Structure probing data (DMS and 2A3) for a 177-nucleotide construct. For DMS, 8,543 sequencing reads were counted. The reactions ran in a buffer of 150 mM KOAc, 10 mM MgCl2 and 150 mM bicine (pH 8.5), at 24 C. It was measured as part of the RMDB library M2PK90.
RNA sequence: GGGAACGACUCGAGUAGAGUCGAAAAUAAAACAGCGUACGACUCACAAAGACUGUACGACAGUCUGACUCUCUCGUACGCUUGUUCAACGAGAGAGAGAGUGCGUUGGAACAAGUGUGAAAAAAAAGAUGAGAAUAGUGUUCGCACUAUUCUCAUCAAAAGAAACAACAACAACAAC
Reactivity to DMS in 0.01 (KOAc 150mM, MgCl2 10mM, bicine 150mM(pH8.5), 24C), signal-to-noise 7, nucleotides 027 to 126: u010a040a090a110a160c030a020g010c020g020u010a030c040g010a120c090u000c090a130c170a130a100a030g000a010c000u000g010u010a140c270g020a140c040a010g010u000c000u000g000a180c070u000c000u000c000u000c010g000u000a060c090g010c080u000u000g010u010u000c060a120a040c030g000a030g000a030g000a020g000a090g020a180g020u000g010c020g020u000u000g010g000a060a040c090a020a070g010u010g010u010g010a000a000a000a070a080a060a130a160
Reactivity to 2A3 in 0.01 (KOAc 150mM, MgCl2 10mM, bicine 150mM(pH8.5), 24C), signal-to-noise 4, nucleotides 027 to 126: u170a000a070a000a010c000a000g040c010g010u020a010c030g160a140c070u030c080a050c020a040a070a000g000a000c000u010g020u160a130c150g180a110c160a000g010u010c000u020g040a040c010u010c000u000c000u000c010g000u040a050c060g030c030u000u070g000u010u000c010a020a010c010g000a000g010a000g000a010g000a000g000a000g020u020g030c020g010u020u040g040g030a020a020c030a070a090g100u110g030u160g170a110a040a010a010a000a010a030a030